[RMDB]
RNA sequence: GGGAACGACUCGAGUAGAGUCGAAAAACAUGGAUCCUAUGGAAAGUAUUUGAAGAGUUUCAAAAAUAAGAAGAAAAAUAGCAGAACAGUAUGAGAAGACAGAUGGCUCAGCUGAUGACAAAAUCCAUUUGACUUUUACCACAUUGGGAGAUGGAGAAUUACCAUAAAAUUUCGAUUUUAUGGUAAUAAAAGAAACAACAACAACAAC
Reactivity to DMS in 0.01 (KOAc 150mM, MgCl2 10mM, bicine 150mM(pH8.5), 24C), signal-to-noise 3, nucleotides 027 to 156: a060c030a080u000g040g010a110u010c000c030u000a070u000g020g000a130a090a180g000u010a090u010u010u010g020a080a190g010a150g000u000u000u010c010a010a050a100a050a100u000a060a090g020a080a120g000a100a070a050a030a110u000a050g040c030a060g010a030a070c070a030g000u010a050u010g000a110g010a060a080g030a090c050a050g000a070u000g030g000c060u000c060a060g030c050u010g010a100u000g010a140c080a030a030a110a130u000c000c030a050u000u000u010g000a070c070u000u000u000u000a120c030c010a050c080a050u010u010g020g030g010a140g010a070u000g010g000a110g020a120
Reactivity to 2A3 in 0.01 (KOAc 150mM, MgCl2 10mM, bicine 150mM(pH8.5), 24C), signal-to-noise 3, nucleotides 027 to 156: a000c020a010u040g030g010a030u020c000c000u060a070u140g020g020a080a070a020g010u060a120u120u080u140g050a070a030g060a030g080u080u170u110c050a070a060a020a010a010u120a040a080g060a020a030g030a020a130a020a020a010u070a020g020c000a000g030a060a010c000a010g020u070a100u130g040a020g020a030a010g030a020c030a000g050a070u060g030g000c020u010c060a000g000c020u070g010a040u100g010a030c030a020a100a000a030u000c020c020a020u020u010u060g060a080c020u050u060u020u140a080c030c030a050c060a140u040u050g040g030g040a050g030a000u120g010g030a010g040a020
This 207-nucleotide RNA was probed chemically with DMS and 2A3. The RNA was probed in 150 mM KOAc, 10 mM MgCl2 and 150 mM bicine (pH 8.5) at 24 C. Values cover nucleotides 27 to 156. Reactivities are rounded to 0.1 and cut off at 0 and 3. 2A3 adducts were read by reverse transcription with SuperScript II with manganese.